About this RNA:
An RNA of 207 nucleotides, treated with DMS and 2A3 and read out base by base. High DMS reactivity at an A or C suggests that its Watson-Crick edge is free. The reactions ran in a buffer of 150 mM KOAc, 10 mM MgCl2 and 150 mM bicine (pH 8.5), at 24 C. Values cover nucleotides 27 to 156. For DMS, 2,611 sequencing reads were counted. For 2A3, 1,570 sequencing reads were counted.
[RMDB]
RNA sequence: GGGAACGACUCGAGUAGAGUCGAAAAGUUUAGCGUAGUCUUCGGGCUAUGCACCGUCUAGGUUUGGGAGUAAUUUUAUGGCGGUAACCCCGUCCCCACGGGAAAGGGUGGUGUGCUUUUUUCUGCGUGCGUCUUCACGGGCGUCGCGCGGGCCCCGCACACCGUCAAUCUUCGGAUUGACGGUGUGAAAAGAAACAACAACAACAAC
Reactivity to DMS in 0.01 (KOAc 150mM, MgCl2 10mM, bicine 150mM(pH8.5), 24C), signal-to-noise 1, nucleotides 027 to 156: g000u000u010u000a080g020c000g070u000a020g020u000c000u010u010c290g090g020g040c010u000a010u000g030c000a120c010c010g000u000c020u000a180g030g000u000u000u000g010g000g020a210g070u000a050a070u000u020u010u010a140u030g010g010c020g020g020u000a090a140c010c010c010c020g030u000c000c020c000c060a140c170g030g000g030a030a070a080g010g020g030u000g030g010u000g020u000g000c040u000u030u000u020u000u000c000u000g010c010g050u000g000c030g030u020c010u010u000c300a140c300g010g000g030c030g000u010c010g070c000g020c000g000g010g000c020c000c010c030g030
Reactivity to 2A3 in 0.01 (KOAc 150mM, MgCl2 10mM, bicine 150mM(pH8.5), 24C), signal-to-noise 2, nucleotides 027 to 156: g050u110u130u210a030g000c010g000u010a000g010u000c010u030u070c240g060g010g000c010u010a010u020g000c000a010c000c000g030u020c030u060a070g020g110u070u080u140g110g060g000a100g060u130a130a190u080u080u030u140a080u170g010g000c010g020g000u030a070a070c030c000c010c000g020u050c020c000c000c020a070c090g060g000g010a010a070a020g080g020g010u050g000g040u020g010u040g040c020u030u050u020u030u050u000c010u020g010c000g010u020g000c010g020u010c010u150u100c140a050c100g000g010g000c010g030u120c050g000c000g000c000g000g010g000c000c000c000c010g090